[RMDB]
RNA sequence: GGGAACGACUCGAGUAGAGUCGAAAAUACAAAAAUUGUAUAGAGUAGCGACUGUAUAAUUUCUAUUGAGGUUAACGUUUAUAUGUAGUGAUAGUAGUUAAAGUUCUCCCAAGGAAGACUACUCGGGCAGGUGAGCCUAAUUCGUUAGGCUCACCUGAAAAGAAACAACAACAACAAC
Reactivity to 2A3 in 0.01 (KOAc 150mM, MgCl2 10mM, bicine 150mM(pH8.5), 24C), signal-to-noise 1, nucleotides 027 to 126: u020a000c020a010a050a040a030a060u230u020g040u020a020u000a010g160a060g030u010a000g040c000g030a030c000u010g080u080a070u010a050a070u000u000u020c010u010a110u000u020g000a040g000g090u000u130a080a000c000g040u000u300u000a300u000a080u110g260u050a040g010u000g240a020u100a030g080u000a010g010u000u120a070a130a040g000u000u000c000u080c040c030c000a000a000g040g020a070a000g040a070c010u000a000c040u020c000g000g000g000
Reactivity to DMS in 0.01 (KOAc 150mM, MgCl2 10mM, bicine 150mM(pH8.5), 24C), signal-to-noise 1, nucleotides 027 to 126: u010a010c100a120a050a110a110a080u030u000g000u000a000u000a110g000a050g000u000a100g000c180g000a020c000u000g010u010a030u000a060a010u000u020u000c100u010a140u000u000g020a070g010g000u000u020a020a070c000g000u020u010u030a070u020a040u000g010u030a070g020u020g000a060u000a030g000u000a070g020u020u000a060a130a130g020u020u000c160u000c050c000c020a090a160g020g000a100a100g000a080c000u000a000c000u000c010g000g000g020

Overview:
This 177-nucleotide RNA was probed chemically with 2A3 and DMS. For 2A3, 547 sequencing reads were counted. Values cover nucleotides 27 to 126. 2A3 adducts were read by reverse transcription with SuperScript II with manganese.